[RMDB]
RNA sequence: GGGAACGACUCGAGUAGAGUCGAAAACAUAUAACCGAUGUGUACUAUAAUACGCACCGUAUGCGUGUAGUGCACACUGACGCAUCGCAACGCCGGCCAAUGCGUCGAUCAACACCACGGCCAAUACCAGUCGUGCGGCUACGUAUGGUCGCGUGCAUCUCAAAGCUAGUUUCGACUAGCUUUGAGAAAAAGAAACAACAACAACAAC
Reactivity to DMS in 0.01 (KOAc 150mM, MgCl2 10mM, bicine 150mM(pH8.5), 24C), signal-to-noise 2, nucleotides 027 to 156: c100a120u000a080u000a110a200c020c040g010a030u000g000u020g060u000a000c040u000a070u010a140a150u010a070c000g000c000a060c030c300g000u000a300u000g020c020g060u000g030u010a070g000u000g010c040a010c030a040c000u010g000a060c020g020c060a030u000c100g020c020a090a050c020g010c050c050g040g030c010c040a040a070u020g030c000g000u000c080g010a120u000c030a120a040c010a050c020c020a230c100g000g050c000c050a110a140u000a120c140c010a030g000u000c010g030u000g000c030g020g000c270u000a010c090g010u010a000u000g000g020u030c000g060c060g000u010g010c040a120
Reactivity to 2A3 in 0.01 (KOAc 150mM, MgCl2 10mM, bicine 150mM(pH8.5), 24C), signal-to-noise 5, nucleotides 027 to 156: c040a030u200a040u070a160a090c060c040g070a160u050g000u010g000u010a010c020u020a010u060a270a230u150a090c020g030c010a040c080c140g250u260a130u190g000c000g000u010g000u000a000g000u000g000c000a000c000a010c010u010g020a030c060g050c110a070u150c070g020c020a110a130c010g080c100c050g050g000c040c000a060a130u060g010c000g010u020c040g030a140u110c050a040a090c030a020c100c020a020c020g000g000c010c060a070a050u140a210c070c050a020g000u020c020g020u030g100c100g030g010c010u010a010c020g010u010a000u070g010g010u050c000g000c010g000u020g020c010a060